[RMDB]
RNA sequence: GGGAACGACUCGAGUAGAGUCGAAAACGCUGUUCAAUCCGGUCAUCAUCAAUGAAGAACGCGAACCGCUGAAAAGCGUCGUUGCGGUGGUGGUGGAUCGCAGCCAGAGCCAGCAACUUGGGAUAAAAUCAUCAUUACCUUUCGAGGUAAUGAUGAUAAAAGAAACAACAACAACAAC
Reactivity to 2A3 in 0.01 (KOAc 150mM, MgCl2 10mM, bicine 150mM(pH8.5), 24C), signal-to-noise 6, nucleotides 027 to 126: c020g000c020u030g020u100u080c050a030a040u030c020c020g070g050u050c020a030u000c000a000u010c020a010a120u220g130a130a130g060a100a020c030g010c000g030a060a050c080c010g000c020u020g030a050a040a010a020g010c010g030u050c030g010u040u070g040c040g030g030u010g000g020u010g000g040u020g030g020a030u030c030g000c020a010g000c000c020a020g010a020g130c010c020a010g040c010a040a070c020u100u090g090g020g010a040u170a090a130a020
Reactivity to DMS in 0.01 (KOAc 150mM, MgCl2 10mM, bicine 150mM(pH8.5), 24C), signal-to-noise 8, nucleotides 027 to 126: c210g010c010u010g000u000u010c130a110a070u000c050c020g010g020u000c010a020u000c010a010u000c060a100a120u020g010a120a130g010a120a110c080g010c060g010a040a060c100c020g000c010u000g000a090a070a120a030g010c000g010u000c170g000u000u010g010c080g010g020u000g010g030u010g010g010u000g010g010a040u000c070g000c050a060g000c010c050a080g020a130g010c020c020a110g000c080a050a070c060u000u000g010g000g010a120u000a050a080a100

Source: RMDB library OK2TST, as collected in RNAgym. Chemical mapping of a 177-nucleotide RNA with 2A3 and DMS. The reactions ran in a buffer of 150 mM KOAc, 10 mM MgCl2 and 150 mM bicine (pH 8.5), at 24 C. For 2A3, 13,430 sequencing reads were counted. Reactivities are given for positions 27 through 126.